[RMDB]
RNA sequence: GGGAACGACUCGAGUAGAGUCGAAAAGUCUGCCGUAUCCGUUCGAAUCGCACGAGAUCGUCGACACCGCGCAGGUGCGCUCGAUCGAGAUCGGCCGCAACAACGUGGUGCGGCUCGCGAACGUGAACGGACUACCGUCGUUCGCGACGGUAGUCCGAAAAGAAACAACAACAACAAC
Reactivity to DMS in 0.01 (KOAc 150mM, MgCl2 10mM, bicine 150mM(pH8.5), 24C), signal-to-noise 1, nucleotides 027 to 126: g000u000c050u000g000c040c010g050u000a060u000c030c010g000u000u000c090g010a180a160u000c100g010c100a230c070g000a070g000a180u010c020g020u000c010g000a060c050a040c090c060g040c260g050c150a150g000g020u000g000c060g000c200u020c030g040a070u000c090g000a030g010a150u010c020g000g010c120c020g000c010a050a020c050a090a100c190g010u000g010g020u000g020c010g010g000c010u000c040g010c010g000a060a030c070g010u020g000a090a070
Reactivity to 2A3 in 0.01 (KOAc 150mM, MgCl2 10mM, bicine 150mM(pH8.5), 24C), signal-to-noise 1, nucleotides 027 to 126: g050u030c010u020g150c090c010g040u120a060u000c000c040g010u000u070c030g040a090a130u110c030g000c050a030c120g050a020g000a110u000c030g010u000c010g030a130c030a020c000c010g000c010g000c240a080g070g090u080g000c010g050c020u020c000g010a010u050c010g000a000g010a070u070c030g020g060c040c000g000c000a040a120c000a000a100c020g210u180g070g010u030g040c000g010g000c010u010c010g000c040g000a010a050c040g050u080g010a080a010